The record gives the reactivity of an RNA of 177 nucleotides to DMS and 2A3. For DMS, 1,009 sequencing reads were counted. In probing experiments dimethyl sulfate is read out at A N1 and C N3, which are open when not base-paired.

RNA sequence: GGGAACGACUCGAGUAGAGUCGAAAACAUGCUUUUAGCCAUAUCUUUGCCGGUGGUUAUGCCGCGGGUUAUUACAGUUACUUGUGGGCGGAAGUGCUCUCGGCUGAUGCUUUCUCGCGCUUUGAAGCAACUCGUCGUGUUUCGACACGACGAGUUGAAAAGAAACAACAACAACAAC
Reactivity to DMS in 0.01 (KOAc 150mM, MgCl2 10mM, bicine 150mM(pH8.5), 24C), signal-to-noise 1, nucleotides 027 to 126: c090a060u000g020c060u000u000u010u000a140g020c010c090a050u010a040u020c020u000u000u000g010c030c000g000g000u000g020g010u000u000a070u020g020c120c040g010c050g010g010g010u000u000a020u010u000a150c200a090g020u000u000a040c090u000u010g030u000g040g030g030c010g000g000a090a220g000u000g030c030u010c070u010c030g000g010c010u000g000a080u000g020c050u010u000u000c030u000c080g000c140g020c050u010u020u000g000a090a100g020
Reactivity to 2A3 in 0.01 (KOAc 150mM, MgCl2 10mM, bicine 150mM(pH8.5), 24C), signal-to-noise 1, nucleotides 027 to 126: c010a020u090g020c100u070u040u060u220a020g000c010c030a030u000a070u180c010u060u080u140g060c060c000g040g000u030g000g040u130u040a050u190g030c010c020g000c010g100g000g000u060u040a070u100u130a070c100a050g040u000u060a110c040u070u070g010u070g150g000g030c000g070g080a180a000g030u030g090c000u000c060u070c020g030g010c000u010g000a060u100g040c170u010u040u010c010u030c020g030c020g000c060u080u070u220g060a030a010g000
The RNA was probed in 150 mM KOAc, 10 mM MgCl2 and 150 mM bicine (pH 8.5) at 24 C.